About this RNA
The record gives the reactivity of an RNA of 177 nucleotides to DMS and 2A3. For DMS, 85,954 sequencing reads were counted. The data come from the RNA Mapping Database (RMDB), library OK1LIB. DMS adducts were read by reverse transcription with MarathonRT. 2A3 adducts were read by reverse transcription with SuperScript II with manganese. The reactions ran in a buffer of 150 mM KOAc, 10 mM MgCl2 and 150 mM bicine (pH 8.5), at 24 C.
[RMDB]
RNA sequence: GGGAACGACUCGAGUAGAGUCGAAAAGUGCGGAGUGAAAUUCAUAGGUGCGUCGCCAAUUUGGCGGAACGACCCGGUACUCCGCGUAGUCGCGAUGUAAACGUUCAGUGUUGGCGUUCAGGCCUCAAAAUAGUAGCUAUUUCGAUAGCUACUAUUUAAAAGAAACAACAACAACAAC
Reactivity to DMS in 0.01 (KOAc 150mM, MgCl2 10mM, bicine 150mM(pH8.5), 24C), signal-to-noise 9, nucleotides 027 to 126: g020u020g010c010g000g000a020g000u000g010a070a080a120u040u030c140a110u030a130g000g010u000g010c030g000u010c000g000c000c000a090a170u020u040u020g010g010c010g000g010a080a030c010g000a080c010c010c070g010g020u010a040c000u000c000c000g020c000g010u010a030g000u010c040g010c040g000a060u010g010u020a070a060a090c060g010u010u010c080a100g010u010g000u000u000g000g000c070g000u000u000c100a090g000g000c030c010u010c070a120
Reactivity to 2A3 in 0.01 (KOAc 150mM, MgCl2 10mM, bicine 150mM(pH8.5), 24C), signal-to-noise 7, nucleotides 027 to 126: g150u110g010c000g000g030a010g010u110g140a080a110a150u220u130c100a110u200a150g030g010u120g080c010g010u020c000g000c010c020a070a120u210u130u250g000g000c000g010g000a050a010c010g020a030c010c000c000g010g020u040a010c000u000c010c000g000c000g000u000a010g010u010c050g020c020g020a020u080g020u120a040a070a030c030g000u030u070c100a080g040u030g020u180u050g000g000c010g010u050u040c030a020g010g070c020c000u050c000a040